[RMDB]
RNA sequence: GGGAACGACUCGAGUAGAGUCGAAAAGGAGUGGGCGGGCUACCUGAUCGGCGGGGCGAUCGCGGUGGGCGGCGCGCAAACGGUGACGCCCGGUGAUUCACUGUGGCGGCCCGGCCUCACCGCGCUACACCAUAAUAUCAUUCGUGAUAUUAUGGUGAAAAGAAACAACAACAACAAC
Reactivity to 2A3 in 0.01 (KOAc 150mM, MgCl2 10mM, bicine 150mM(pH8.5), 24C), signal-to-noise 6, nucleotides 027 to 126: g090g060a240g080u270g020g030g140c190g030g010g000c030u070a080c020c040u080g070a130u100c050g040g020c050g010g010g010g010c040g040a030u070c020g010c020g010g010u020g000g020g000c070g020g010c060g000c020g000c070a130a110a040c030g010g020u050g030a020c010g010c000c020c020g000g020u040g020a300u190u170c020a000c030u040g050u130g070g000c000g000g010c010c010c000g050g010c000c000u040c010a010c000c010g000c000g010c010u060a040
Reactivity to DMS in 0.01 (KOAc 150mM, MgCl2 10mM, bicine 150mM(pH8.5), 24C), signal-to-noise 9, nucleotides 027 to 126: g000g000a170g020u010g010g010g010c110g000g000g000c070u000a060c070c040u000g010a070u010c070g010g020c070g010g000g010g030c070g000a060u000c030g020c020g010g020u000g010g000g010c060g000g000c080g010c050g010c090a050a080a170c040g010g010u000g010a060c050g010c030c020c020g010g010u000g010a170u010u010c040a020c030u010g010u010g020g010c010g000g000c020c010c040g000g010c050c010u010c030a030c050c010g010c040g010c220u000a130